Conditions: 150 mM KOAc, 10 mM MgCl2 and 150 mM bicine (pH 8.5), 24 C. This 207-nucleotide RNA was probed chemically with DMS and 2A3. 2A3 adducts were read by reverse transcription with SuperScript II with manganese. High 2A3 reactivity points to a flexible backbone, as in loops and unpaired stretches.
[RMDB]
RNA sequence: GGGAACGACUCGAGUAGAGUCGAAAAUUAGGCCAGUGCCUUUUUAUGUAGAACAUCCUUGGUGUCAUUGCCAUAGCUUUCUUGGGCUGCUGUUGCUGAAGGAAGUGUAACAGGUGCUGCGGGUGCACAGUUAGGUAGGAAAGAGGCUCCCAGCCAGCAUUCGCCAUAUGUUCGCAUAUGGCGAAUGAAAAGAAACAACAACAACAAC
Reactivity to DMS in 0.01 (KOAc 150mM, MgCl2 10mM, bicine 150mM(pH8.5), 24C), signal-to-noise 1, nucleotides 027 to 156: u030u010a040g030g010c000c050a180g040u000g000c000c000u040u000u000u000u000a100u030g040u010a100g010a110a120c050a160u000c020c030u000u000g060g030u000g020u000c080a200u000u000g000c030c030a120u000a150g020c010u010u000u000c070u000u000g030g020g060c000u010g010c040u000g000u000u000g030c010u000g010a090a130g030g020a010a100g020u010g000u000a060a110c010a060g030g020u000g030c000u000g060c170g000g000g000u000g000c010a050c060a120g000u000u000a020g030g030u010a090g000g010a090a040a110g000a120g000g010c040u010c000c030c030a210g050c060c000a090g000
Reactivity to 2A3 in 0.01 (KOAc 150mM, MgCl2 10mM, bicine 150mM(pH8.5), 24C), signal-to-noise 2, nucleotides 027 to 156: u100u050a050g020g000c040c040a060g080u120g090c040c050u030u020u040u050u080a250u130g090u070a060g040a110a010c020a080u000c050c030u050u050g000g000u040g050u090c150a150u040u160g030c010c010a040u060a040g010c010u010u050u050c010u050u100g030g040g010c030u060g030c050u050g110u150u050g020c010u080g040a010a010g030g020a010a000g040u010g010u080a110a070c070a040g000g080u020g030c000u050g010c070g040g030g000u020g000c020a010c000a060g000u110u060a030g080g030u050a040g020g070a110a060a050g040a020g020g020c000u040c050c010c000a000g040c010c000a020g030